Conditions: 150 mM KOAc, 10 mM MgCl2 and 150 mM bicine (pH 8.5), 24 C. Chemical mapping of a 207-nucleotide RNA with 2A3. For 2A3, 689 sequencing reads were counted.
RNA sequence: GGGAACGACUCGAGUAGAGUCGAAAACCACUACCUUCGGGUAGUGGAAAAAAUCCUAAGUCUGCUCGCCGAGUUGUCAGCUGCAGUCGGAAACGACUGGCAGCUUGGAUUUAUAUCGAGCAGAUAUGGAAAAAACGGCUCGAUUCGUCGAGCCGAACGGAUAACAAGGGUUCGCCCUUGUUAUCCGAAAAGAAACAACAACAACAAC
Reactivity to 2A3 in 0.01 (KOAc 150mM, MgCl2 10mM, bicine 150mM(pH8.5), 24C), signal-to-noise 1, nucleotides 027 to 156: c010c000a010c010u020a010c000c000u010u080c210g090g010g010u010a000g010u090g030g000a000a060a000a000a000a040u040c030c000u060a120a020g010u000c000u000g010c000u000c000g130c070c050g060a040g050u040u000g040u120c000a000g030c040u180g010c040a050g040u060c030g150g050a140a140a070c020g000a000c020u010g090g100c000a000g000c000u010u000g000g000a000u020u250u080a120u090a060u300c000g000a000g010c000a000g000a000u010a000u010g000g000a000a130a000a180a000a030c010g020g000c020u020c000g040a040u080u040c140g040u010c000g130a000g000c020c000g000a040a010